RNA sequence: GGGAACGACUCGAGUAGAGUCGAAAAGAUAUGGAGGCCAUGGGAGUUGCGAUCGGAAACGAUCGACCCAACAUCGAUCAUGAAGCCUCCUAAGUCAAAAGGUUUAUGUACUUCGGUACAUAAACCAGAUAAGUUUCAUGUUCGCAUGAAACUUAUCAAAAGAAACAACAACAACAAC
Reactivity to 2A3 in 0.01 (KOAc 150mM, MgCl2 10mM, bicine 150mM(pH8.5), 24C), signal-to-noise 5, nucleotides 027 to 126: g000a010u020a000u040g000g000a000g000g020c020c000a000u000g020g000g010a040g020u020u020g040c000g000a000u010c010g000g010a000a000a000c010g000a000u010c010g030a070c090c070c010a000a000c010a020u300c020g000a010u000c010a000u010g180a270a090g000c000c000u000c010c000u000a010a000g000u000c020a040a030a080a240g000g000u000u010u000a010u010g010u000a000c010u050u150c300g160g000u010a000c000a010u000a000a000a000c010c010a000
Reactivity to DMS in 0.01 (KOAc 150mM, MgCl2 10mM, bicine 150mM(pH8.5), 24C), signal-to-noise 5, nucleotides 027 to 126: g000a010u000a020u020g000g000a020g030g000c010c010a010u010g000g000g000a030g030u000u000g030c020g000a030u000c010g020g010a010a010a040c010g030a010u000c000g010a170c230c300c110a010a030c020a300u000c220g010a040u000c000a010u000g000a170a190g000c000c010u000c010c000u000a000a050g010u000c010a110a070a160a090g000g000u000u000u000a000u000g000u000a010c000u000u010c240g020g000u000a000c000a010u000a000a000a000c000c000a040

The record gives the reactivity of an RNA of 177 nucleotides to 2A3 and DMS. For 2A3 the reverse transcriptase was SuperScript II with manganese. Values cover nucleotides 27 to 126. It was measured as part of the RMDB library TTRDES.